Structure probing data (DMS and 2A3) for a 177-nucleotide construct. For DMS, 1,133 sequencing reads were counted. Conditions: 150 mM KOAc, 10 mM MgCl2 and 150 mM bicine (pH 8.5), 24 C. For 2A3 the reverse transcriptase was SuperScript II with manganese. It was measured as part of the RMDB library OK2TRN.

RNA sequence: GGGAACGACUCGAGUAGAGUCGAAAACUGGCAGACUUGGACUGGGUGUGGGAGAUGAUCAAGCUGGCUCUUGCUCCGGCUCUGCCUCCCAACAAAGACAUGCCUCGAAUUCUGUUCUAUGAGGAGCACGUCAUCAUCGGUUCGCCGAUGAUGACGUAAAAGAAACAACAACAACAAC
Reactivity to DMS in 0.01 (KOAc 150mM, MgCl2 10mM, bicine 150mM(pH8.5), 24C), signal-to-noise 1, nucleotides 027 to 126: c140u000g030g000c060a060g020a080c100u000u000g000g000a160c030u000g000g000g000u000g000u000g000g020g020a050g000a110u000g010a090u010c090a120a110g000c030u000g010g000c080u000c070u010u020g000c140u000c010c050g010g030c050u000c130u000g000c030c000u010c000c000c000a040a050c130a060a080a090g010a080c110a050u010g020c010c010u000c090g010a060a100u000u000c100u000g010u000u010c110u000a150u000g010a030g020g000a070g010c050
Reactivity to 2A3 in 0.01 (KOAc 150mM, MgCl2 10mM, bicine 150mM(pH8.5), 24C), signal-to-noise 2, nucleotides 027 to 126: c030u040g000g000c030a000g040a110c030u090u150g020g050a090c030u060g010g090g000u150g060u100g060g050g000a060g000a000u200g030a120u110c090a070a010g060c040u080g070g000c020u050c030u030u040g000c020u020c000c000g000g040c060u050c030u020g010c020c010u010c000c000c000a010a030c060a020a080a010g120a040c010a040u080g030c010c000u020c030g050a050a080u190u060c080u090g110u080u050c030u050a120u300g070a060g070g020a010g010c050